[RMDB]
An RNA of 207 nucleotides, treated with 2A3 and read out base by base. Values cover nucleotides 27 to 156. The reactions ran in a buffer of 150 mM KOAc, 10 mM MgCl2 and 150 mM bicine (pH 8.5), at 24 C.
RNA sequence: GGGAACGACUCGAGUAGAGUCGAAAACCAUCCGAAACGUACGGCGGAUGGGAAAGCAUGCCGCACCAGAGUGUGUUACGUGAUGCGAAGCUGGCAUGCGAAAGGAUGGUUCUCUUCCAGUAAGCGGACAGCAGCGCGCUCAUCCACUAAGUGCGAAUCUGAUUCACACGUUCGCGUGUGAAUCAGAAAAAGAAACAACAACAACAAC
Reactivity to 2A3 in 0.01 (KOAc 150mM, MgCl2 10mM, bicine 150mM(pH8.5), 24C), signal-to-noise 1, nucleotides 027 to 156: c000c000a000u000c000c000g190a140a280a290c090g010u160a050c190g180g050c010g030g030a020u010g020g010g080a020a000a000g080c050a120u270g010c000c010g000c000a010c010c000a010g010a050g110u070g000u000g010u040u130a060c130g000u140g030a040u150g020c040g130a040a000g000c060u000g020g060c150a010u160g000c060g000a040a000a000g060g010a000u010g000g000u290u080c180u020c000u130u000c000c000a040g010u120a240a000g000c020g040g060a010c020a010g050c000a010g110c040g000c000g000c000u020c040a110u110c010c000a110c070u090a130a110g010u000g050c080g040a000a020